[RMDB]
RNA sequence: GGGAACGACUCGAGUAGAGUCGAAAAGAAAGAAAGAAAACCGUGUGGAAAAGAAUGGCUAUAACCACUGAAACCUGAGGAAACAGGAAGCCACAACGCAAGCCAUGUGGUUUGCACACGGAAGAAAAUCCGCUAUACUAUUCGUAGUAUAGCGGAUAAAAGAAACAACAACAACAAC
Reactivity to 2A3 in 0.01 (KOAc 150mM, MgCl2 10mM, bicine 150mM(pH8.5), 24C), signal-to-noise 4, nucleotides 027 to 126: g070a010a040a010g110a040a090a010g070a000a090a000a010c000c020g000u020g000u000g070g070a040a080a020a010g040a070a130u060g000g000c030u050a040u050a300a050c080c040a060c130u060g050a150a030a020c010c000u070g040a110g050g250a180a070a010c000a000g020g000a000a010g030c010c020a010c030a080a050c090g030c120a060a010g000c020c010a030u110g060u040g040g050u010u030u020g010c010a000c010a010c000g020g030a040a010g040a010a100a000
Reactivity to DMS in 0.01 (KOAc 150mM, MgCl2 10mM, bicine 150mM(pH8.5), 24C), signal-to-noise 5, nucleotides 027 to 126: g020a090a100a150g010a150a100a130g000a090a130a150a090c000c010g000u010g010u000g000g020a060a040a060a040g000a150a040u030g010g010c000u000a080u020a080a110c080c110a080c100u020g030a070a110a100c010c010u010g000a100g030g010a100a100a140c030a010g010g000a090a060g010c040c040a050c100a070a050c180g010c150a050a050g010c010c000a080u000g020u030g000g000u000u000u000g000c000a010c010a020c000g000g010a040a060g010a100a070a080
Conditions: 150 mM KOAc, 10 mM MgCl2 and 150 mM bicine (pH 8.5), 24 C.
An RNA of 177 nucleotides, treated with 2A3 and DMS and read out base by base.
The 2A3 profile rests on 4,519 reads.
For DMS the reverse transcriptase was MarathonRT.